[RMDB]
This 177-nucleotide RNA was probed chemically with DMS. The reactions ran in a buffer of 150 mM KOAc, 10 mM MgCl2 and 150 mM bicine (pH 8.5), at 24 C.

RNA sequence: GGGAACGACUCGAGUAGAGUCGAAAAACAUGUACUACUGGGCUGGCCACACCGUCACCAGCAGGCUGCUGGACAGCUCAGGAAAUCCUCUCAAGUACACAUAUGGAAGCAUGACAUCUGAGAAGAACGAUCACGCGGAAUUCGUUCCGCGUGAUCGAAAAGAAACAACAACAACAAC
Reactivity to DMS in 0.01 (KOAc 150mM, MgCl2 10mM, bicine 150mM(pH8.5), 24C), signal-to-noise 1, nucleotides 027 to 126: a090c190a110u000g000u000a020c040u000a090c000u010g020g000g010c000u000g000g010c020c000a060c110a100c030c040g000u000c050a120c090c020a020g070c000a070g020g000c170u000g100c240u000g030g000a050c000a010g000c000u000c000a010g000g000a070a110a240u000c030c020u000c160u000c050a110a040g030u000a020c000a140c290a040u040a100u000g000g000a230a090g000c080a050u000g000a080c090a110u040c060u030g020a160g020a080a030g020a060a110
Source: RMDB library OK2TRN, as collected in RNAgym.